[RMDB]
RNA sequence: GGGAACGACUCGAGUAGAGUCGAAAAUGAGUUUUUCUUUCUGCAACUUGCACUUUUAAUUGACCUGUUGAUCUUGAUCUUCACUUCGGUAUAAAGUGCGAAAUUCAAGCAACUAUUCACCAAAAAAAGGAGGGUACGUAUUCGUACGUACCCUCCUAAAAGAAACAACAACAACAAC
Reactivity to 2A3 in 0.01 (KOAc 150mM, MgCl2 10mM, bicine 150mM(pH8.5), 24C), signal-to-noise 2, nucleotides 027 to 126: u160g040a050g000u000u000u000u000u000c040u000u060u080c180u150g040c050a070a050c070u030u030g050c070a000c000u030u100u090u090a070a220u120u110g000a000c000c000u000g020u040u000g020a040u000c130u210u210g070a010u110c000u020u020c020a110c110u090u010c000g000g050u070a020u040a050a000a030g000u000g010c010g100a000a020a130u210u270c050a020a040g050c040a090a050c030u030a080u000u070c170a290c160c080a020a000a010a000a000a000
Source: RMDB library OK1LIB, as collected in RNAgym. This 177-nucleotide RNA was probed chemically with 2A3.